[RMDB]
RNA sequence: GGGAACGACUCGAGUAGAGUCGAAAAUGUGAUCGACGAGUACCGGCUGGUCUAUCGGGCGGAUUCGCUGGUGAACUGGUGCCCGGGGCUAGGUACGGUGCUUGCCAACGAAGAGGUGACCGCCGACUCACUAUUCACCUUUCGAGGUGAAUAGUGAAAAAGAAACAACAACAACAAC
Reactivity to DMS in 0.01 (KOAc 150mM, MgCl2 10mM, bicine 150mM(pH8.5), 24C), signal-to-noise 4, nucleotides 027 to 126: u030g030u010g010a070u010c050g000a120c040g000a000g010u000a010c020c000g020g010c000u000g000g000u010c020u020a100u040c010g010g020g020c000g020g000a130u010u000c030g030c220u020g010g030u020g000a030a020c110u020g000g040u030g000c020c010c020g030g020g020g030c010u030a020g020g020u010a060c010g000g000u000g000c020u000u000g020c070c040a090a120c070g000a070a070g020a120g000g020u010g000a200c040c030g000c020c050g000a230c180
Reactivity to 2A3 in 0.01 (KOAc 150mM, MgCl2 10mM, bicine 150mM(pH8.5), 24C), signal-to-noise 8, nucleotides 027 to 126: u210g050u080g040a100u070c030g070a080c010g020a030g010u020a010c010c000g030g030c010u030g010g020u020c000u030a200u180c010g000g000g000c050g060g070a220u090u050c040g030c160u150g090g100u300g060a080a060c030u060g130g140u240g040c000c000c010g010g000g010g000c000u030a080g090g070u160a230c020g000g000u000g010c000u010u030g010c000c010a030a080c040g050a070a030g040a030g070g060u050g030a040c010c040g010c020c010g090a100c010